[RMDB]
RNA sequence: GGGAACGACUCGAGUAGAGUCGAAAAGGACGAAAACUAGGCUCCGCCCGGCCUGGUUUAAACAGCCUGUUCCGGGGGAAGGUGCGGGCGAACUUCCGAUGACCGGUACAGUGUCAUCCGGCGAAUCGAGUCCAUGUAGGUUCGCCUACAUGGACUCAAAAGAAACAACAACAACAAC
Reactivity to 2A3 in 0.01 (KOAc 150mM, MgCl2 10mM, bicine 150mM(pH8.5), 24C), signal-to-noise 1, nucleotides 027 to 126: g050g010a020c030g090a020a040a010a000c000u000a000g000g000c000u060c070c040g010c000c020c010g030g000c000c000u000g010g000u040u000u010a000a040a020c120a000g010c000c000u000g010u030u020c000c000g030g000g000g010g000a010a030g020g040u030g030c030g010g010g000c000g010a020a010c020u040u000c000c000g110a150u040g070a060c010c000g020g000u080a060c000a040g020u010g010u190c020a010u000c020c000g030g010c050g070a000a050u130c120
Reactivity to DMS in 0.01 (KOAc 150mM, MgCl2 10mM, bicine 150mM(pH8.5), 24C), signal-to-noise 1, nucleotides 027 to 126: g000g070a100c060g000a060a020a010a000c000u000a030g050g000c000u030c100c030g000c000c020c000g000g000c020c000u000g010g000u000u010u000a040a060a110c250a070g000c000c020u000g000u000u000c000c000g040g000g020g010g030a060a040g000g000u060g000c160g000g020g010c010g000a050a070c030u020u000c000c010g000a060u000g000a130c010c010g020g000u050a090c040a060g000u000g000u000c070a100u010c080c010g000g010c140g000a080a040u000c070